[RMDB]
RNA sequence: GGGAACGACUCGAGUAGAGUCGAAAAGGAGCUGGCACCUGCCGUCUGUAUUUCACUUACGUGGCAAGCAAAAUUACACAUGUCGGUGUGAGACUAUAGUUAGUUGCGACGGGUACGUCGUUAAAAGGAUUACCCGAGAAUUCGUUCUCGGGUAAUCAAAAGAAACAACAACAACAAC
Reactivity to 2A3 in 0.01 (KOAc 150mM, MgCl2 10mM, bicine 150mM(pH8.5), 24C), signal-to-noise 1, nucleotides 027 to 126: g030g010a000g000c010u040g040g020c020a040c010c020u020g000c000c010g040u020c020u040g070u000a120u010u090u070c040a030c030u030u100a040c070g020u000g100g000c040a050a020g060c000a020a170a000a050u130u140a030c010a000c000a000u050g060u060c030g060g010u020g040u090g060a080g000a010c050u080a000u090a180g160u210u050a030g030u080u090g040c000g000a000c000g030g000g120u190a120c050g000u000c010g020u050u090a000a070a070a000g150
Reactivity to DMS in 0.01 (KOAc 150mM, MgCl2 10mM, bicine 150mM(pH8.5), 24C), signal-to-noise 4, nucleotides 027 to 126: g030g010a070g020c050u000g000g020c040a090c040c040u010g020c070c020g020u010c040u010g030u000a050u000u010u000c060a080c090u000u000a070c090g000u010g000g000c060a050a050g000c090a050a050a070a050u010u000a060c040a050c070a050u010g010u000c080g000g010u000g020u000g000a100g000a050c050u000a060u010a070g020u000u000a060g020u010u010g010c030g010a020c010g010g000g010u000a100c050g000u000c010g020u000u000a030a070a080a150g000